[RMDB]
RNA sequence: GGGAACGACUCGAGUAGAGUCGAAAAGAGUAAUGGGCGCCCAAGGUGAGAUGAAGCUGUAGUCUCACUGGAAGGACUAGAGGUUAGAGGAGACACGCCCAAAACAAGCAACAGCUUCAUCAAGAGACGAUGCGGAUAUAUUCGUAUAUCCGCAUCGAAAAGAAACAACAACAACAAC
Reactivity to DMS in 0.01 (KOAc 150mM, MgCl2 10mM, bicine 150mM(pH8.5), 24C), signal-to-noise 4, nucleotides 027 to 126: g000a160g010u020a060a100u010g010g000g000c020g000c010c000c000a070a110g000g000u000g010a070g010a010u000g020a020a030g000c000u000g000u000a150g020u010c000u010c000a090c050u020g020g000a170a090g000g010a100c030u040a070g000a110g010g000u010u020a020g010a150g000g000a070g000a050c040a150c180g000c000c020c050a040a040a050a090c230a090a110g030c060a220a030c020a020g000c010u000u000c000a020u000c020a040a120g020a140g040a180
Reactivity to 2A3 in 0.01 (KOAc 150mM, MgCl2 10mM, bicine 150mM(pH8.5), 24C), signal-to-noise 4, nucleotides 027 to 126: g130a000g070u180a070a010u120g000g020g010c040g030c020c000c000a020a020g110g040u040g040a100g000a010u000g010a010a020g020c000u020g000u070a030g000u020c000u000c020a090c020u010g040g030a030a000g050g030a040c070u110a040g040a100g160g040u080u140a040g010a070g130g020a040g010a010c020a020c050g020c000c000c000a020a060a010a010c030a020a020g130c020a000a010c000a010g000c000u070u060c010a080u030c010a020a010g080a020g010a070

The record gives the reactivity of an RNA of 177 nucleotides to DMS and 2A3. Conditions: 150 mM KOAc, 10 mM MgCl2 and 150 mM bicine (pH 8.5), 24 C. For DMS the reverse transcriptase was MarathonRT.